[RMDB]
RNA sequence: GGGAACGACUCGAGUAGAGUCGAAAAACUUUGACUAACUUCCUGGAUCUAAUUCAAAAACAAGAAUGAGUUGGUGAGCUUUUUUUGUUUGGCUUAAUGUAAGGAUUUCUACCAACUGACAAGAAGCCAUAUGUUACCAAUUCGUUGGUAACAUAUGAAAAGAAACAACAACAACAAC
Reactivity to DMS in 0.01 (KOAc 150mM, MgCl2 10mM, bicine 150mM(pH8.5), 24C), signal-to-noise 8, nucleotides 027 to 126: a080c080u000u000u000g010a110c080u010a090a120c090u000u000c030c020u000g020g000a120u000c050u010a050a070u000u010c060a050a080a050a070a070c120a070a050g000a050a070u000g010a040g020u000u000g010g020u000g010a120g010c030u000u000u000u000u010u000u000g010u000u010u000g020g000c050u000u010a070a070u010g000u000a060a050g010g000a100u000u000u000c090u010a100c060c050a040a060c040u000g010a050c070a030a070g010a070a080g010c110
Reactivity to 2A3 in 0.01 (KOAc 150mM, MgCl2 10mM, bicine 150mM(pH8.5), 24C), signal-to-noise 5, nucleotides 027 to 126: a000c060u140u110u150g050a040c010u020a130a020c020u030u010c020c000u020g070g060a060u020c030u140a130a040u150u050c070a030a080a060a110a130c040a030a050g100a060a100u100g010a020g040u020u030g030g040u050g050a040g000c020u140u160u080u060u030u100u100g050u090u060u090g060g010c010u050u090a070a020u130g040u120a040a030g070g050a080u140u140u000c010u040a060c010c020a050a040c010u020g000a010c020a050a010g080a050a000g050c020
The record gives the reactivity of an RNA of 177 nucleotides to DMS and 2A3. The data come from the RNA Mapping Database (RMDB), library OK2TRN. 2A3 adducts were read by reverse transcription with SuperScript II with manganese. High 2A3 reactivity points to a flexible backbone, as in loops and unpaired stretches.